[RMDB]
RNA sequence: GGGAACGACUCGAGUAGAGUCGAAAAGGUAUCCACUUCGGUGGAUACCAAAGGCGAUCCCAGCAUCAGGGAACAACAACAAUAGAUGCAUCCCUAUCGCCAAAAUUCCGGAUUUCGAUCCGGAAAACGAGGUACAGUAUUUCGAUACUGUACCUCGAAAAGAAACAACAACAACAAC
Reactivity to 2A3 in 0.01 (KOAc 150mM, MgCl2 10mM, bicine 150mM(pH8.5), 24C), signal-to-noise 2, nucleotides 027 to 126: g000g000u000a000u000c000c000a000c020u060u070c170g090g010u000g000g010a000u000a000c000c000a020a020a040g010g000c010g010a000u010c030c010c010a000g020c000a020u040c000a010g010g060g140a170a130c030a040a000c030a020a010c020a020a210u080a200g030a020u010g020c030a060u020c000c010c010u010a010u020c000g000c010c010a050a080a000a010u060u000c000c000g000g000a030u080u060u100c150g050a020u050c000c000g000g000a010a010a000a010
Reactivity to DMS in 0.01 (KOAc 150mM, MgCl2 10mM, bicine 150mM(pH8.5), 24C), signal-to-noise 2, nucleotides 027 to 126: g000g010u000a010u000c000c000a010c000u000u000c240g050g040u000g000g000a010u010a010c000c000a000a100a010g050g010c000g000a030u000c010c000c000a110g000c040a010u010c080a140g020g000g000a050a070c120a050a070c170a080a070c110a050a070u010a120g000a060u000g010c020a050u000c010c000c020u000a300u000c000g000c000c010a090a120a080a150u000u010c000c000g000g020a020u000u000u020c210g010a030u000c010c000g010g000a000a000a000a100